[RMDB]
RNA sequence: GGGAACGACUCGAGUAGAGUCGAAAAUUACAUAAGUCUAACACCUUGUUUCGGACUAACAAGGGCGUAUGGAGGAUGGCCGACCCUCCAUAGUUAGACGUCCGAGAACCAGCCGAAAUGAAAAAGAGAUAGGCCAUAUCUUCGGAUAUGGCCUAUCAAAAGAAACAACAACAACAAC
Reactivity to DMS in 0.01 (KOAc 150mM, MgCl2 10mM, bicine 150mM(pH8.5), 24C), signal-to-noise 2, nucleotides 027 to 126: u020u130a110c120a120u000a070a030g000u010c010u060a050a040c070a120c040c010u000u010g010u000u000u010c030g040g000a020c170u000a050a120c050a010a120g000g030g000c110g010u010a000u000g000g010a070g000g020a230u000g000g010c020c000g020a210c220c000c000u000c000c000a000u080a010g000u020u020a110g010a100c020g000u000c030c010g000a050g030a080a150c070c060a220g020c070c010g000a040a120a040u000g000a020a050a080a010a080g030a150
Reactivity to 2A3 in 0.01 (KOAc 150mM, MgCl2 10mM, bicine 150mM(pH8.5), 24C), signal-to-noise 3, nucleotides 027 to 126: u070u040a030c060a120u180a100a030g080u030c010u050a090a000c030a060c020c000u000u020g010u010u040u060c150g120g080a160c090u090a000a030c000a000a030g020g010g010c030g120u030a000u020g000g010a020g000g000a030u050g040g010c020c030g020a060c030c000c000u000c000c000a000u000a000g000u010u010a030g000a020c000g000u000c020c060g040a050g010a060a020c020c010a010g000c000c020g040a030a030a110u150g050a130a150a010a000a000g130a000
Background
Structure probing data (DMS and 2A3) for a 177-nucleotide construct. For 2A3, 1,549 sequencing reads were counted. Source: RMDB library OK1LIB, as collected in RNAgym. The reactions ran in a buffer of 150 mM KOAc, 10 mM MgCl2 and 150 mM bicine (pH 8.5), at 24 C. 2A3 is a SHAPE reagent: it acylates the 2'-hydroxyl of flexible nucleotides of all four kinds. For 2A3 the reverse transcriptase was SuperScript II with manganese.